[RMDB]
RNA sequence: GGGAACGACUCGAGUAGAGUCGAAAAGAAACGACGGUUGGCUAACCCUGGUCGGACAUCAGGAGGUUAGUGCAGUCGCAUAAGCCAGCUUGACAACAAAAAGGAAAAAGAAAGAAGAAAAAGAAAAACUAGUAUUUUAUUUCGAUAAAAUACUAGUAAAAGAAACAACAACAACAAC
Reactivity to 2A3 in 0.01 (KOAc 150mM, MgCl2 10mM, bicine 150mM(pH8.5), 24C), signal-to-noise 2, nucleotides 027 to 126: g030a010a050a000c040g260a000c040g080g000u060u050g040g000c000u000a010a010c000c000c040u000g050g000u010c180g080g140a070c050a060u010c020a020g010g000a040g030g010u000u010a020g000u020g070c000a020g010u000c000g000c020a130u130a060a000g050c000c000a000g010c050u100u140g090a060c070a080a020c090a010a070a040a030a000g110g000a140a160a030a020a070g130a050a050a040g020a010a090g080a020a160a020a070a030g050a010a190a020a000
Conditions: 150 mM KOAc, 10 mM MgCl2 and 150 mM bicine (pH 8.5), 24 C. Structure probing data (2A3) for a 177-nucleotide construct. It was measured as part of the RMDB library OK1LIB. For 2A3, 955 sequencing reads were counted. For 2A3 the reverse transcriptase was SuperScript II with manganese.